Chemical mapping of a 207-nucleotide RNA with 2A3 and DMS.
Reactivities are rounded to 0.1 and cut off at 0 and 3.
The reactions ran in a buffer of 150 mM KOAc, 10 mM MgCl2 and 150 mM bicine (pH 8.5), at 24 C.
It was measured as part of the RMDB library OK3TST.

RNA sequence: GGGAACGACUCGAGUAGAGUCGAAAAGCUGUGAAUAGGUAAGCCUAUAUCUGUUCGCACUACAGGCACUAUGUCGCAUCAUGGUCCCUGUGAACUCGAAGCUUGAUGCGACAAGUUUUGAGUGAUCUCAGACACUAUAGGCUUAGUUCUUGAGAGCCUAAUCAGCGCAUUUCGAUGCGCUGAUUAGAAAAGAAACAACAACAACAAC
Reactivity to 2A3 in 0.01 (KOAc 150mM, MgCl2 10mM, bicine 150mM(pH8.5), 24C), signal-to-noise 4, nucleotides 027 to 156: g030c050u030g010u030g110a040a030u040a060g040g030u020a010a010g000c010c000u020a020u010a020u030c040u000g020u050u100c050g020c010a010c020u150a050c030a020g040g010c050a010c030u060a060u200g020u040c040g020c070a070u050c010a030u120g080g020u090c010c000c020u080g070u060g090a060a030c040u000c060g030a000a020g050c000u010u010g010a010u030g100c030g050a030c010a000a000g010u010u020u010u010g030a020g010u030g100a110u000c040u010c030a020g020a080c050a020c080u030a000u000a020g000g000c000u030u020a040g030u060u040c010u050u110g060a140g000a010g040c000
Reactivity to DMS in 0.01 (KOAc 150mM, MgCl2 10mM, bicine 150mM(pH8.5), 24C), signal-to-noise 1, nucleotides 027 to 156: g040c020u000g020u000g020a060a090u000a040g020g000u020a050a080g000c000c000u000a030u000a030u000c010u000g030u010u010c040g010c010a110c040u010a100c060a030g000g070c070a090c040u020a070u000g000u000c100g020c080a070u000c000a010u020g000g000u010c070c020c020u000g040u000g020a110a080c030u000c020g000a000a050g010c020u000u000g010a080u000g030c160g000a040c000a020a040g000u000u000u000u010g010a070g020u010g010a160u000c030u000c050a130g000a130c110a070c060u000a050u000a020g000g020c000u010u000a060g010u000u000c010u000u010g000a140g030a130g000c090